RNA sequence: GGGAACGACUCGAGUAGAGUCGAAAAUAUGUCAUUUGUUGUGCGUACAGCAGGUGGCACAACUUUCUCUAUGUCGCCACAUAGUGGAAGUGAACUCAGUGCUGUACGCACAGUUCUGAGUGACCUUUGCUACUGUAGCGACAGUGGUAAAGAAGUACCUACUGAUCCUGUUCGCAGGAUCAGUAGGAAAAGAAACAACAACAACAAC
Reactivity to 2A3 in 0.01 (KOAc 150mM, MgCl2 10mM, bicine 150mM(pH8.5), 24C), signal-to-noise 2, nucleotides 027 to 156: u300a080u120g040u010c000a020u000u030u040g070u020u010g010u010g010c030g000u020a000c010a000g000c010a010g080g100u040g030g030c100a020c020a020a070c000u000u010u000c010u000c000u000a000u010g050u020c110g050c240c050a020c010a010u010a010g020u020g010g010a000a010g000u000g020a010a000c010u010c080a140g140u000g000c000u000g000u000a000c010g000c000a000c000a000g000u000u000c070u060g030a010g030u020g010a020c000c000u040u000u000g000c000u000a000c010u000g050u080a100g140c100g170a040c000a000g010u010g040g000u030a000a000a000g010a020a000g010u050a030
Reactivity to DMS in 0.01 (KOAc 150mM, MgCl2 10mM, bicine 150mM(pH8.5), 24C), signal-to-noise 1, nucleotides 027 to 156: u000a030u020g010u010c010a010u000u000u000g010u000u050g010u000g010c090g000u000a050c000a020g010c000a100g000g070u000g020g070c000a020c060a170a070c020u010u010u000c020u000c020u000a040u000g010u010c230g000c300c180a250c010a010u000a000g020u000g020g010a010a010g010u000g010a110a040c030u000c080a120g020u010g000c000u010g010u000a070c170g010c000a010c000a000g020u010u000c100u010g010a020g020u000g010a010c150c000u000u000u000g010c040u000a020c010u030g010u000a160g000c210g130a230c010a040g040u000g000g000u020a020a030a040g000a080a070g010u000a160

The record gives the reactivity of an RNA of 207 nucleotides to 2A3 and DMS.
The RNA was probed in 150 mM KOAc, 10 mM MgCl2 and 150 mM bicine (pH 8.5) at 24 C.
For 2A3 the reverse transcriptase was SuperScript II with manganese.
For 2A3, 2,320 sequencing reads were counted.